[RMDB]
RNA sequence: GGGAACGACUCGAGUAGAGUCGAAAAGGAAAGGCUAAGCACCUCGCAAUGAGGUAAGGUGGGACUUUUCCUUCUGGAACCAAGCGGUUGGUUCCGAGGGGGGUGUGACUCAGGUACCGCCGUAGAAACUGAGUUACGACGUCUACCCGGGAUUCAACCUAUGCUUAUCGUUCGCGAUAAGCAUAGGAAAAGAAACAACAACAACAAC
Reactivity to DMS in 0.01 (KOAc 150mM, MgCl2 10mM, bicine 150mM(pH8.5), 24C), signal-to-noise 2, nucleotides 027 to 156: g000g000a030a040a030g020g020c000u010a110a180g050c040a120c010c020u010c040g060c060a250a170u010g010a040g050g000u000a020a040g020g020u000g000g070g010a080c020u000u000u000u000c010c010u000u010c030u000g020g010a040a060c010c000a050a130g040c210g030g020u010u020g000g010u000u010c000c000g000a050g010g000g030g010g050g000u010g000u000g000a030c020u000c030a040g010g020u010a170c040c030g020c060c190g000u000a070g000a030a100a280c020u000g000a050g010u000u000a200c020g000a090c070g020u000c020u010a080c000c000c010g020g020g020a260u000u000c040a060a220
Reactivity to 2A3 in 0.01 (KOAc 150mM, MgCl2 10mM, bicine 150mM(pH8.5), 24C), signal-to-noise 3, nucleotides 027 to 156: g020g010a020a010a000g040g030c040u100a060a020g040c010a060c010c010u020c030g090c160a170a300u300g000a010g040g060u070a060a060g080g000u050g030g000g070a070c020u110u070u030u020c000c000u050u000c100u110g010g000a000a000c000c000a010a010g060c050g140g030u050u050g000g000u020u000c000c000g010a060g010g010g000g000g020g010u070g000u010g040a010c010u020c050a000g000g000u070a030c000c030g030c040c050g090u080a030g070a040a180a020c030u020g000a000g010u020u000a010c020g030a010c030g130u000c020u030a030c000c010c030g000g020g000a040u140u100c040a060a030
The record gives the reactivity of an RNA of 207 nucleotides to DMS and 2A3. DMS (dimethyl sulfate) methylates the pairing face of unpaired adenines and cytosines. The DMS profile rests on 3,907 reads. The RNA was probed in 150 mM KOAc, 10 mM MgCl2 and 150 mM bicine (pH 8.5) at 24 C. The data come from the RNA Mapping Database (RMDB), library VIROID.